[RMDB]
RNA sequence: GGGAACGACUCGAGUAGAGUCGAAAAUUACAUAAGUCUAACACCUUGUUUCGGACUAACAAGGCCGCAUGGAGGAUGGCCGCGCCUCCAUAGUUAGACGUCCGAGAACCAGCCGAAAUGAAAAAGACGUCCAUAAAUAUUUCGAUAUUUAUGGACGAAAAGAAACAACAACAACAAC
Reactivity to 2A3 in 0.01 (KOAc 150mM, MgCl2 10mM, bicine 150mM(pH8.5), 24C), signal-to-noise 5, nucleotides 027 to 126: u150u090a090c030a040u220a170a040g010u000c010u000a000a010c000a020c020c000u010u020g040u050u070u130c160g140g050a100c060u010a030a000c000a010a000g010g010c050c060g180c090a020u020g000g000a000g000g010a050u080g070g000c000c010g020c030g020c000c000u000c000c000a010u010a000g000u000u000a000g000a010c010g010u010c030c030g060a040g030a100a050c010c000a010g050c030c030g060a070a060a080u140g060a130a110a060a020a030g090a040
Reactivity to DMS in 0.01 (KOAc 150mM, MgCl2 10mM, bicine 150mM(pH8.5), 24C), signal-to-noise 3, nucleotides 027 to 126: u000u060a130c120a150u020a080a120g010u010c010u000a040a010c030a300c050c010u010u000g000u000u000u030c070g000g030a120c080u000a030a040c020a020a010g000g020c300c160g050c170a000u010g010g010a010g000g000a040u030g000g000c020c000g000c080g020c000c000u000c030c000a010u010a090g020u000u010a000g000a040c000g000u000c040c040g010a130g010a110a170c030c020a070g000c010c020g020a050a120a050u010g030a050a080a100a150a150g000a120

Source: RMDB library OK1LIB, as collected in RNAgym. The record gives the reactivity of an RNA of 177 nucleotides to 2A3 and DMS. The DMS profile rests on 3,770 reads. The RNA was probed in 150 mM KOAc, 10 mM MgCl2 and 150 mM bicine (pH 8.5) at 24 C. For DMS the reverse transcriptase was MarathonRT. Values cover nucleotides 27 to 126. For 2A3 the reverse transcriptase was SuperScript II with manganese.